Source: RMDB library OK1LIB, as collected in RNAgym. This 177-nucleotide RNA was probed chemically with 2A3 and DMS. As a SHAPE reagent, 2A3 marks flexible, mostly unpaired nucleotides at the ribose 2'-OH. For 2A3, 3,583 sequencing reads were counted. For DMS the reverse transcriptase was MarathonRT. Reactivities are given for positions 27 through 126. For 2A3 the reverse transcriptase was SuperScript II with manganese.
[RMDB]
RNA sequence: GGGAACGACUCGAGUAGAGUCGAAAAUGAUCGAUCAAUCGCUAGCGAAAUUCAUCGCGCCUACCAUCCUGGAUCACGGACGGAUUUCAAAGAUGAUGCCGCCGCGGCGCGGACGGUAGUCGCGCCGAGGCCGAUACUGCUUCGGCAGUAUCGGCCUAAAAGAAACAACAACAACAAC
Reactivity to 2A3 in 0.01 (KOAc 150mM, MgCl2 10mM, bicine 150mM(pH8.5), 24C), signal-to-noise 6, nucleotides 027 to 126: u080g000a030u050c070g020a040u090c090a100a050u040c080g050c110u100a060g070c040g060a060a060a080u160u080c030a020u070c040g000c000g010c010c000u010a010c000c020a030u030c020c010u090g200g050a240u050c000a020c040g010g110a080c020g040g060a200u060u080u070c160a240a230a120g140a140u180g020a040u140g070c000c010g000c010c000g000c000g000g000c010g000c000g020g010a010c010g000g000u040a030g000u050c000g000c000g000c000c000g010
Reactivity to DMS in 0.01 (KOAc 150mM, MgCl2 10mM, bicine 150mM(pH8.5), 24C), signal-to-noise 1, nucleotides 027 to 126: u010g000a010u000c090g010a040u010c190a110a070u020c060g030c070u000a100g020c080g000a060a190a070u000u000c070a050u020c000g010c000g000c000c010u000a000c000c000a060u000c000c000u000g000g000a180u000c000a060c020g000g000a220c000g000g000a040u000u000u020c140a070a180a150g000a090u100g040a050u000g000c000c020g010c000c000g000c040g010g000c080g000c220g060g030a040c020g000g010u000a020g000u000c050g000c060g000c090c090g000